Notes
An RNA of 177 nucleotides, treated with DMS and 2A3 and read out base by base.
[RMDB]
RNA sequence: GGGAACGACUCGAGUAGAGUCGAAAAGAUAUGGAGCGUCUACCCACCUUGAAUAGUCGUUUGACGACUGACAAACUCGGAAACGAGUUUGUCAGUCCGAGACUAAACAAGAGGACGCUCCUAAGUCGUAUUCGAUUAACUUCGGUUAAUCGAAUACAAAAGAAACAACAACAACAAC
Reactivity to DMS in 0.01 (KOAc 150mM, MgCl2 10mM, bicine 150mM(pH8.5), 24C), signal-to-noise 2, nucleotides 027 to 126: g010a190u010a160u020g000g010a030g020c000g020u010c000u010a140c020c000c010a300c080c000u010u000g010a030a300u000a010g000u000c000g030u020u010u020g000a220c300g000a000c000u010g010a000c000a000a010a000c000u000c000g000g010a080a110a220c000g000a010g010u000u000u000g000u010c000a000g020u010c010c000g020a100g000a020c000u000a010a010a300c010a010a030g000a060g010g000a000c000g000c000u010c000c000u030a000a080g030u020c160
Reactivity to 2A3 in 0.01 (KOAc 150mM, MgCl2 10mM, bicine 150mM(pH8.5), 24C), signal-to-noise 1, nucleotides 027 to 126: g170a050u300a110u300g000g010a000g000c010g050u000c020u160a300c000c000c000a030c050c010u000u010g000a010a030u020a010g000u000c090g140u140u160u300g080a050c020g060a010c000u000g030a000c000a010a050a000c000u010c000g000g000a000a100a090c010g000a000g010u000u000u000g000u010c020a000g000u010c000c000g000a000g000a000c000u010a000a080a000c020a010a000g000a000g000g010a020c010g000c000u030c000c000u010a000a010g200u120c100

It was measured as part of the RMDB library TTRINS.
High 2A3 reactivity points to a flexible backbone, as in loops and unpaired stretches.